[RMDB]
RNA sequence: GGGAACGACUCGAGUAGAGUCGAAAAGAGCUUUUUUUCGAAAAAGCUCCGGCGCAAUGCCUAUGUGUACACUUCACAAGGGUUUGUGGUCGUCAAUGGCAAUACCAGCAAUCUUCGGAUUGCUGAAUAAGCUAUAGGUAUUCGUACCUAUAGCUUAAAAAGAAACAACAACAACAAC
Reactivity to 2A3 in 0.01 (KOAc 150mM, MgCl2 10mM, bicine 150mM(pH8.5), 24C), signal-to-noise 4, nucleotides 027 to 126: g000a000g000c000u000u030u010u010u020u050u180c090g050a010a020a010a010a000g010c000u000c000c010g010g000c010g000c000a030a060u210g080c010c010u050a170u110g030u000g010u060a080c210a120c250u110u110c020a010c020a090a140g030g000g010u020u040u020g040u030g130g070u020c000g020u040c040a030a100u090g140g000c050a100a070u040a250c060c010a000g010c000a000a000u000c000u030u050c130g090g000a000u000u000g000c000u000g010a000a040
Reactivity to DMS in 0.01 (KOAc 150mM, MgCl2 10mM, bicine 150mM(pH8.5), 24C), signal-to-noise 7, nucleotides 027 to 126: g010a010g010c000u000u000u000u000u000u000u020c120g010a020a010a010a010a020g010c000u000c000c020g000g020c010g010c020a020a020u010g040c000c000u000a120u000g010u000g000u000a110c260a120c250u010u010c000a010c020a030a300g010g010g000u000u000u000g000u000g010g020u000c030g010u000c120a020a080u010g010g010c070a090a060u010a070c210c000a010g000c000a020a010u000c000u000u010c170g020g000a010u000u000g000c000u010g000a060a060